[RMDB]
RNA sequence: GGGAACGACUCGAGUAGAGUCGAAAAGAUAUGGAUAUUGAUACUUCCGCAAAGCGACGUUUCGGAAACGAAACAUCGCCAUGUAUGGAAGUCAAUAUCCUAAGUCAAAACACGUGUUCGCACGUGAGUCCACAUGGUGCUUCGGCACCAUGUGGACAAAAGAAACAACAACAACAAC
Reactivity to 2A3 in 0.01 (KOAc 150mM, MgCl2 10mM, bicine 150mM(pH8.5), 24C), signal-to-noise 1, nucleotides 027 to 126: g000a010u020a020u030g010g000a000u000a000u030u000g040a070u120a300c020u000u000c040c020g260c300a040a020a000g020c000g020a030c000g010u000u010u000c040g020g000a010a010a000c000g000a000a000a030c020a010u000c000g000c040c020a110u300g080u100a230u300g000g010a000a000g000u000c000a020a000u000a010u000c000c030u000a000a000g000u000c010a070a000a140a100c000a000c030g030u050g050u160u130c300g020c120a000c010g000u020g030a030